[RMDB]
Structure probing data (DMS and 2A3) for a 170-nucleotide construct.
For DMS the reverse transcriptase was MarathonRT.
2A3 is a SHAPE reagent: it acylates the 2'-hydroxyl of flexible nucleotides of all four kinds.
RNA sequence: GGGAACGACUCGAGUAGAGUCGAAAAACCGUCUGGAAUCAGGUAGUCACAUAUCCCUCGCUUAACUACGCUGGGGCUUUGUGGGACAUUACAGUUAUAAACAAUGUGGACAAUGAAAUUGUUAAGUAGACGUACACGUUCGCGUGUACGAAAAGAAACAACAACAACAAC
Reactivity to DMS in 0.01 (KOAc 150mM, MgCl2 10mM, bicine 150mM(pH8.5), 24C), signal-to-noise 6, nucleotides 027 to 129: a110c000c000g020u030c030u050g040g000a130a080u050c100a060g030g050u090a000g010u030c040a000c030a050u040a120u010c010c020c000u030c300g020c040u000u000a050a110c200u090a090c190g030c060u040g030g000g000g080c070u000u000u000g030u020g000g040g010a050c050a080u000u000a070c070a080g000u000u000a050u060a040a060a060c110a000a000u030g000u040g020g030a090c100a060a040u000g040a000a030a140u070u010g000u000u040a050a110g030u040a000g020a130
Reactivity to 2A3 in 0.01 (KOAc 150mM, MgCl2 10mM, bicine 150mM(pH8.5), 24C), signal-to-noise 6, nucleotides 027 to 129: a000c000c000g060u030c030u060g040g040a040a050u090c000a040g070g010u050a020g100u040c000a000c000a040u030a010u050c020c000c000u000c010g030c020u140u100a190a040c090u100a040c140g000c010u010g020g000g000g020c020u040u010u000g020u020g000g010g030a030c010a030u050u030a050c020a030g070u060u060a140u090a160a070a020c110a040a040u090g020u080g130g050a010c020a060a020u100g070a070a090a090u090u030g010u010u050a040a040g020u030a050g040a070